[RMDB]
RNA sequence: GGGAACGACUCGAGUAGAGUCGAAAACGCACUCGCAGCUUAAUAACCUGCGCUGAGCCCUUCUCCCCCAGCUUGCCUGUGUCCUAGGGAAUUGGAAGGUCAUCCUUCACAGGAUCGUCUGGAAGUCAUUACUCGUGAGUGUUCGCACUCACGAGAACCUUCCACAGUGCUUCGGCACUGUGGAAGGAAAAGAAACAACAACAACAAC
Reactivity to 2A3 in 0.01 (KOAc 150mM, MgCl2 10mM, bicine 150mM(pH8.5), 24C), signal-to-noise 2, nucleotides 027 to 156: c070g000c010a050c000u030c000g010c000a000g000c010u060u010a020a000u010a010a090c000c010u010g000c040g070c140u050g010a020g030c000c000c000u130u040c160u020c000c000c020c000c000a000g010c000u110u300g020c030c010u010g000u010g020u120c020c080u030a130g050g000g060a080a140u090u020g070g060a020a080g100g030u140c040a100u110c000c000u010u010c000a000c000a000g010g010a040u070c010g050u060c000u000g060g030a020a030g090u030c020a150u100u220a090c050u000c020g000u000g000a000g010u000g000u000u040c030g070c010a000c000u010c000a000c000g000a000g000a000a000